Structure probing data (2A3 and DMS) for a 207-nucleotide construct.

[RMDB]
RNA sequence: GGGAACGACUCGAGUAGAGUCGAAAACAGAAUCUUGAUCUUGCUGCUGAGGCUUCUGCGCGGUGGGCGUCUGUUACUGGCGAGUCUAUUGACUCGGUGGCGUCUAAGUUUGAGGCAAUCGGAAAAGACCCGCUCCAAGCCAUUGAAUCGGGUCAAAAGAUACGUUAUAAUUCGUUAUAACGUAUCUAAAAGAAACAACAACAACAAC
Reactivity to 2A3 in 0.01 (KOAc 150mM, MgCl2 10mM, bicine 150mM(pH8.5), 24C), signal-to-noise 4, nucleotides 027 to 156: c030a010g130a110a100u080c040u090u100g010a030u050c020u040u080g040c020u030g000c000u050g040a030g060g000c000u110u040c030u100g010c030g000c020g050g040u040g020g020g000c000g030u010c020u070g130u090u110a090c040u040g100g040c020g010a000g000u000c010u070a260u140u300g000a010c000u000c010g030g040u000g010g000c000g010u000c010u030a100a070g030u040u110u150g030a020g000g020c020a050a090u090c040g050g020a040a050a030a030g010a010c000c020c000g010c010u010c020c030a030a050g030c040c060a090u030u080g040a010a020u060c010g000g000g000u010c020a020a060a000
Reactivity to DMS in 0.01 (KOAc 150mM, MgCl2 10mM, bicine 150mM(pH8.5), 24C), signal-to-noise 2, nucleotides 027 to 156: c070a160g010a080a080u000c080u010u000g010a090u000c030u010u010g030c000u020g010c020u030g010a170g020g010c020u010u010c010u010g040c040g030c050g050g000u000g020g030g030c040g000u000c020u000g020u000u000a060c040u010g010g020c030g000a050g040u000c010u000a150u000u000g040a020c000u000c010g010g050u000g020g010c050g020u020c060u000a060a110g020u010u000u000g020a070g020g020c000a060a110u000c050g010g010a140a050a110a250g010a050c010c010c030g010c170u000c020c030a040a080g000c120c130a140u010u010g010a000a040u000c020g010g030g010u000c000a050a010a100
Conditions: 150 mM KOAc, 10 mM MgCl2 and 150 mM bicine (pH 8.5), 24 C.